[RMDB]
RNA sequence: GGGAACGACUCGAGUAGAGUCGAAAAGAUAUGGACCGAGGUGAGAACUACAACCUCUAAUCGGAAACGAUUAAGUUGCUCACCGUUUGACGUCCUAAGUCGGAAGCCAUUCGUUCGCGAAUGGCAACCGCUAAGCAUGUUUCGACAUGCUUAGCGGAAAAGAAACAACAACAACAAC
Reactivity to 2A3 in 0.01 (KOAc 150mM, MgCl2 10mM, bicine 150mM(pH8.5), 24C), signal-to-noise 2, nucleotides 027 to 126: g010a010u050a020u080g000g000a000c020c100g060a140g000g040u050g060a000g000a040a080c170u210a050c300a020a010c000c000u000c000u020a000a000u010c000g010g000a060a030a010c000g010a000u000u020a130a190g000u010u030g000c020u000c000a000c000c030g000u050u090u160g030a040c110g000u000c010c000u010a060a030g040u030c020g050g090a040a000g000c000c000a010u030u020c010g050u010u140c300g010c020g220a010a000u010g010g000c000a010a000
Reactivity to DMS in 0.01 (KOAc 150mM, MgCl2 10mM, bicine 150mM(pH8.5), 24C), signal-to-noise 2, nucleotides 027 to 126: g010a080u000a300u000g020g020a010c000c080g000a040g000g040u000g000a000g000a150a060c090u020a300c030a010a010c020c000u000c000u020a020a020u000c020g010g000a050a070a130c000g010a000u010u000a000a080g000u010u010g000c030u000c000a010c000c000g010u000u000u000g020a210c300g000u000c000c020u010a010a090g000u010c010g000g040a140a190g010c000c000a000u000u000c000g020u010u010c270g020c000g000a000a010u000g000g010c010a020a040
Source: RMDB library TTRDEL, as collected in RNAgym. An RNA of 177 nucleotides, treated with 2A3 and DMS and read out base by base. Values are in units of 0.01, from 0 to 300, in steps of 10. DMS adducts were read by reverse transcription with MarathonRT. For 2A3, 2,788 sequencing reads were counted. 2A3 adducts were read by reverse transcription with SuperScript II with manganese.